[RMDB]
RNA sequence: GGGAACGACUCGAGUAGAGUCGAAAAGGUUGAACUGUUCGUUUUCUUCUAAUUGAAACGCAUUGACUUCGGCGGGCAACAGCAUUUUACGCUCAAAAACCCACGCCAGCACAAACAGCAAGAUGGCCAGGAAUAGAGAGUUCGCUCUCUAUUCCUGAAAAGAAACAACAACAACAAC
Reactivity to DMS in 0.01 (KOAc 150mM, MgCl2 10mM, bicine 150mM(pH8.5), 24C), signal-to-noise 2, nucleotides 027 to 126: g000g000u000u010g000a110a110c100u000g000u000u000c100g030u010u000u000u000c040u000u010c130u020a060a140u030u000g010a040a020a080c090g010c130a070u000u000g000a080c030u000u000c090g040g050c050g000g020g000c050a050a090c100a070g020c020a120u010u000u000u000a090c100g000c030u010c090a050a050a050a130a110c020c010c070a060c110g000c050c020a000g050c060a040c150a030a080a030c040a080g030c060a020a140g000a070u000g010g000c070
Structure probing data (DMS) for a 177-nucleotide construct.